[RMDB]
RNA sequence: GGGAACGACUCGAGUAGAGUCGAAAAGAGAAUCGGUGCCGUAACCGUGGCGUUACGCAUAACAGUCAAUCUGGGAUGCUGUUGUAAACCCUUGGCUUUAUGCACCUGGCUGCAAGCAGCCAUGCAGCCGGUGCUACCGGUUCGCCGGUAGCACCGGAAAAGAAACAACAACAACAAC
Reactivity to DMS in 0.01 (KOAc 150mM, MgCl2 10mM, bicine 150mM(pH8.5), 24C), signal-to-noise 1, nucleotides 027 to 126: g000a130g020a090a120u000c080g000g010u000g000c110c060g010u000a010a010c000c020g010u010g020g010c150g040u000u000a040c050g000c100a030u000a030a010c110a000g010u010c070a090a110u000c140u000g040g030g050a120u000g010c020u000g020u000u000g020u000a040a060a100c020c010c020u000u010g000g000c040u010u000u000a020u020g000c010a060c070c050u010g030g000c010u000g000c000a030a030g020c010a010g000c000c140a140u010g010c010a030g010
Reactivity to 2A3 in 0.01 (KOAc 150mM, MgCl2 10mM, bicine 150mM(pH8.5), 24C), signal-to-noise 1, nucleotides 027 to 126: g140a010g060a010a100u090c050g000g000u070g000c070c020g060u050a000a040c020c040g120u180g050g110c050g030u090u030a030c050g000c020a010u010a030a030c050a010g020u000c010a040a090u140c130u210g040g070g010a080u000g020c030u050g160u140u100g140u170a160a250a220c000c010c000u040u000g000g000c010u020u050u080a050u030g010c000a030c000c080u090g010g000c000u000g020c030a010a130g050c000a020g060c060c110a100u110g050c000a000g050